RNA sequence: GGGAACGACUCGAGUAGAGUCGAAAAUGCUGGAAACGUGCGUAGCAACAGUAGGCCGAGUAUCCAACGUUGAUCAUAACAAACGGGUCAUUGGCAAGGCAGGUCGCAACCGCUGGCUGGGCAAGAGACCAUAUUUGUCGUUCGCGACAAAUAUGGUAAAAGAAACAACAACAACAAC
Reactivity to DMS in 0.01 (KOAc 150mM, MgCl2 10mM, bicine 150mM(pH8.5), 24C), signal-to-noise 4, nucleotides 027 to 126: u010g000c050u020g000g000a060a070a100c110g020u000g020c060g020u000a080g020c050a070a120c080a050g020u000a080g020g040c050c040g000a140g010u010a040u010c020c030a070a150c180g020u010u000g020a060u010c140a070u010a100a110c100a050a080a090c140g010g000g010u000c040a120u000u010g000g010c100a090a040g000g000c040a040g000g020u000c090g000c090a060a090c060c050g000c040u000g010g020c030u000g010g020g000c060a050a070g000a100g010
Reactivity to 2A3 in 0.01 (KOAc 150mM, MgCl2 10mM, bicine 150mM(pH8.5), 24C), signal-to-noise 2, nucleotides 027 to 126: u110g000c050u030g010g060a120a120a060c050g030u060g000c030g080u080a020g060c030a010a110c010a030g100u080a060g120g000c010c000g020a040g040u040a060u030c020c020a040a000c050g010u030u010g040a090u090c050a080u110a210a120c060a110a090a030c050g050g000g010u020c020a070u090u100g030g000c050a040a020g030g020c000a020g040g010u020c000g000c050a050a030c010c000g020c030u010g010g010c010u030g040g000g000c050a050a010g050a000g020